Overview
Structure probing data (DMS and 2A3) for a 177-nucleotide construct. For 2A3, 2,213 sequencing reads were counted.
RNA sequence: GGGAACGACUCGAGUAGAGUCGAAAAGAUAUGGAGAGGUUGUGGGAGGCUAGCUUCGGAAACGAAGCGGCCGUUGAUCACAACUCCCCACCUCCUAAGUCAAAAGUUGACGCUUCGGCGUCAACAAUCUAUAAAUUCCGUUCGCGGAAUUUAUAGAAAAAGAAACAACAACAACAAC
Reactivity to DMS in 0.01 (KOAc 150mM, MgCl2 10mM, bicine 150mM(pH8.5), 24C), signal-to-noise 2, nucleotides 027 to 126: g000a030u000a020u010g000g000a030g050a300g020g000u000u010g010u000g000g000g000a020g010g010c000u010a070g010c000u000u000c000g000g000a050a030a050c000g030a010a010g010c000g010g000c000c020g020u000u010g000a070u010c000a010c020a020a020c000u000c070c010c010c060a140c160c030u000c000c000u020a030a130g000u020c040a120a120a160a140g020u000u000g010a010c000g000c000u000u010c240g010g020c000g000u000c000a000a000c000a040a060
Reactivity to 2A3 in 0.01 (KOAc 150mM, MgCl2 10mM, bicine 150mM(pH8.5), 24C), signal-to-noise 1, nucleotides 027 to 126: g010a010u040a030u060g000g000a010g040a020g030g060u040u020g000u010g030g000g020a010g020g030c020u280a230g000c010u230u000c000g000g000a040a010a000c000g000a000a020g030c000g010g020c030c010g040u080u010g000a000u000c010a000c000a000a010c020u100c000c000c020c010a300c000c010u000c000c020u000a000a010g000u040c010a050a020a060a150g000u020u000g010a010c010g020c000u040u150c300g180g000c000g020u010c000a000a000c000a000a000